[RMDB]
RNA sequence: GGGAACGACUCGAGUAGAGUCGAAAACUGCUUAGCUUCUCUAAAACACUGGGCUACGUUUUUCAACGCUCGAGAGGCAGAGUCUCAAGGAGCCUCCAAUGGGCCUCACGUAUUCAUCUAGAUGGCGAACACUACAACGUUUCGACGUUGUAGUGUUAAAAGAAACAACAACAACAAC
Reactivity to DMS in 0.01 (KOAc 150mM, MgCl2 10mM, bicine 150mM(pH8.5), 24C), signal-to-noise 4, nucleotides 027 to 126: c070u010g020c080u000u010a080g020c040u000u000c040u000c080u030a080a070a110a110c150a080c100u000g000g000g000c020u000a090c090g010u000u000u010u010u010c080a090a080c080g000c030u000c020g010a060g010a050g020g020c040a140g010a090g000u010c010u000c040a120a140g000g000a070g000c040c040u000c040c110a120a090u030g000g000g010c010c020u000c060a070c080g000u000a060u010u010c030a050u010c070u000a050g000a050u010g000g010c060g010
Reactivity to 2A3 in 0.01 (KOAc 150mM, MgCl2 10mM, bicine 150mM(pH8.5), 24C), signal-to-noise 7, nucleotides 027 to 126: c020u030g010c030u100u050a010g020c010u120u070c020u030c020u110a040a090a080a030c080a050c030u050g000g000g010c010u050a030c040g030u020u000u010u070u120c060a060a020c030g000c010u020c030g050a040g000a010g090g000c020a020g010a020g070u000c010u000c070a030a130g080g000a030g030c000c010u030c020c000a060a150u120g010g050g010c020c000u030c000a040c020g050u050a110u100u100c050a080u020c050u080a050g010a130u050g030g020c020g030